[RMDB]
RNA sequence: GGGAACGACUCGAGUAGAGUCGAAAAGACAAGCGAGGGUUCUGACGCGUUGACUUGGUGUUCUGCUUGGUUGCGUGUCGGCUGCGGCGACGUCCCUGCAGAGGGACGUGGCCGGGCCGUUGAUGCGGAGGGAACGGGUCAGGCCGGCGACGGAGCACACCCUCACUAGGUUCGCCUAGUGAGGGUGAAAAGAAACAACAACAACAAC
Reactivity to 2A3 in 0.01 (KOAc 150mM, MgCl2 10mM, bicine 150mM(pH8.5), 24C), signal-to-noise 1, nucleotides 027 to 156: g020a020c060a000a030g000c040g040a070g020g030g000u140u070c040u060g040a060c020g010c040g150u060u190g020a090c010u060u030g110g000u040g060u180u050c040u100g130c060u050u140g120g060u080u070g070c030g070u040g010u010c020g000g000c060u230g270c000g000g000c030g010a000c000g000u000c000c000c000u020g120c180a110g010a020g210g000g000a000c000g010u020g060g000c000c010g000g000g020c010c020g000u040u040g040a070u050g020c030g000g030a020g060g010g010a000a060c000g060g030g030u000c020a000g060g040c010c030g000g030c010g030a040c010g070g000a010g000c000a000